An RNA of 177 nucleotides, treated with 2A3 and DMS and read out base by base. The RNA was probed in 150 mM KOAc, 10 mM MgCl2 and 150 mM bicine (pH 8.5) at 24 C. For 2A3 the reverse transcriptase was SuperScript II with manganese. Values cover nucleotides 27 to 126.
RNA sequence: GGGAACGACUCGAGUAGAGUCGAAAACAUAAAGCGUGAUGCAGGGUCAUACCUGCAAGUGCGCGUCGCGCACCAUGAGGGCCUAAGGCGUAGGCGUGACUUGAAACUCUCUGCAUUUGCAGACCAGACCUAGCACAUUCUUCGGAAUGUGCUAGGUAAAAGAAACAACAACAACAAC
Reactivity to 2A3 in 0.01 (KOAc 150mM, MgCl2 10mM, bicine 150mM(pH8.5), 24C), signal-to-noise 6, nucleotides 027 to 126: c050a030u180a130a150a010g030c030g030u050g030a030u060g000c000a010g060g000g030u210c030a040u100a160c010c040u020g010c000a010a010g000u010g010c010g000c030g040u050c040g000c010g000c000a080c030c000a080u140g090a100g010g020g010c000c020u110a120a080g160g010c050g020u060a040g000g000c020g010u020g000a010c000u030u040g050a100a070a070c020u030c020u000c010u040g010c040a180u040u110u300g010c030a010g010a030c000c040a020g040
Reactivity to DMS in 0.01 (KOAc 150mM, MgCl2 10mM, bicine 150mM(pH8.5), 24C), signal-to-noise 3, nucleotides 027 to 126: c150a150u080a070a070a070g000c030g030u010g000a250u020g010c000a000g000g000g000u020c290a120u090a080c040c000u000g000c040a010a010g040u000g010c040g010c020g010u010c120g030c030g000c070a080c050c100a050u000g010a100g000g000g000c030c110u010a140a120g010g000c000g020u030a040g010g010c010g000u010g000a010c000u000u030g000a040a100a100c130u020c040u000c000u030g020c000a300u010u000u040g030c000a020g000a130c110c120a120g010